[RMDB]
RNA sequence: GGGAACGACUCGAGUAGAGUCGAAAAACUGAUUGUCUGUAUGAUAUACAUCAUUACUCUCAGUCGCCAGAACAGCAGUUUUCCUAUGGCUGGAAACAAGUUUUCGAUAGGAUGGCUUCACAAGUGACAUACAAAUAUCGUUCGCGAUAUUUGUAUGAAAAGAAACAACAACAACAAC
Reactivity to DMS in 0.01 (KOAc 150mM, MgCl2 10mM, bicine 150mM(pH8.5), 24C), signal-to-noise 9, nucleotides 027 to 126: a080c090u000g000a030u000u000g010u000c070u000g010u010a030u000g000a040u000a170u000a130c200a050u000c010a020u000u000a040c020u000c030u000c000a020g010u000c030g010c050c040a120g000a080a080c140a060g010c050a050g010u000u000u000u000c010c010u000a040u000g020g020c050u010g010g000a040a030a050c080a060a100g010u000u000u000u000c040g010a060u010a040g000g000a040u000g000g000c020u000u000c080a060c180a070a070g010u000g010a230
Reactivity to 2A3 in 0.01 (KOAc 150mM, MgCl2 10mM, bicine 150mM(pH8.5), 24C), signal-to-noise 8, nucleotides 027 to 126: a000c020u020g010a050u050u030g040u040c100u070g140u120a030u020g040a020u080a020u050a240c080a040u020c000a010u010u100a030c010u000c000u000c020a010g040u020c020g050c070c010a050g040a110a040c030a030g070c000a020g020u000u010u070u060c010c000u020a030u040g190g000c130u120g080g050a030a030a010c080a180a090g030u020u030u030u070c030g020a020u010a010g020g010a020u020g030g000c000u060u070c070a060c020a120a110g090u050g140a030
This 177-nucleotide RNA was probed chemically with DMS and 2A3. DMS adducts were read by reverse transcription with MarathonRT. The 2A3 profile rests on 15,581 reads. Source: RMDB library OK2TST, as collected in RNAgym. Values cover nucleotides 27 to 126.